[RMDB]
RNA sequence: GGGAACGACUCGAGUAGAGUCGAAAAGAUAUGGACGAAGCUCGAUAAGCUAGGAUCGGAAACGAUCCCUAGCUUUUGACGAGCUAAGUCCUAAGUCAAAACCCGCCUGAGUUCGCUCAGGCGGGAACCUAGUAUGUUAGUUCGCUAACAUACUAGGAAAAGAAACAACAACAACAAC
Reactivity to DMS in 0.01 (KOAc 150mM, MgCl2 10mM, bicine 150mM(pH8.5), 24C), signal-to-noise 5, nucleotides 027 to 126: g010a040u010a300u010g010g010a010c000g010a300a070g000c000u010c000g000a140u000a010a010g010c000u010a010g000g000a020u010c000g000g000a090a060a160c000g010a010u000c130c040c050u010a000g010c000u000u000u000u000g020a200c100g000a010g010c000u000a010a300g000u000c000c000u000a010a110g010u000c030a120a090a120a150c000c000c000g000c000c010u000g000a000g010u000u010c280g000c020u000c000a000g000g010c000g010g000g000a000a010
Reactivity to 2A3 in 0.01 (KOAc 150mM, MgCl2 10mM, bicine 150mM(pH8.5), 24C), signal-to-noise 4, nucleotides 027 to 126: g020a000u040a030u070g000g000a000c000g020a080a020g000c000u010c020g100a160u070a270a000g000c000u000a000g010g010a000u010c010g020g010a070a020a020c010g010a010u000c060c060c000u010a000g000c000u020u020u040u090g040a010c000g000a000g000c000u000a010a000g000u010c000c000u000a020a010g000u010c010a030a040a100a200c010c010c010g030c020c000u020g000a030g020u080u250c270g200c180u000c010a000g000g000c010g010g000g000a000a000